[RMDB]
RNA sequence: GGGAACGACUCGAGUAGAGUCGAAAAGAUAUGGAAGUGGGCUCGCGUUGAUCGUGGGUUCGGAAACGAACCGUAACAUCGGGAGCGGGUCCACUUCCUAAGUCAAAUCACGGGUUCGCCCGUGAAAGCCAAAGUAUGAGUUCGCUCAUACUUUGGCAAAAGAAACAACAACAACAAC
Reactivity to 2A3 in 0.01 (KOAc 150mM, MgCl2 10mM, bicine 150mM(pH8.5), 24C), signal-to-noise 1, nucleotides 027 to 126: g020a020u040a040u060g000g000a010a000g000u020g020g010g010c000u020c010g010c010g130u240u130g000a020u030c020g000u050g020g000g030u020u000c030g010g040a020a040a000c000g010a000a000c010c030g030u110a060a040c030a150u300c030g020g010g010a060g010c000g010g000g000u000c000c000a000c000u000u010c000c010u020a000a000g000u000c000a000a000a040u060c010a000c000g030g000g030u060u050c160g130c020c000c000g000u010g000a020a010a000
Reactivity to DMS in 0.01 (KOAc 150mM, MgCl2 10mM, bicine 150mM(pH8.5), 24C), signal-to-noise 3, nucleotides 027 to 126: g010a060u020a230u010g000g000a000a010g030u000g000g000g010c000u000c000g030c000g020u000u010g000a030u020c030g030u010g010g020g010u000u000c000g000g000a070a050a130c010g010a010a010c000c000g020u010a080a150c160a080u010c050g000g010g020a050g020c000g000g000g000u000c000c000a000c000u010u000c000c000u000a020a060g000u010c030a090a140a130u000c000a000c010g000g000g000u000u020c220g020c010c010c000g020u000g000a000a070a100
The record gives the reactivity of an RNA of 177 nucleotides to 2A3 and DMS. The RNA was probed in 150 mM KOAc, 10 mM MgCl2 and 150 mM bicine (pH 8.5) at 24 C. 2A3 adducts were read by reverse transcription with SuperScript II with manganese.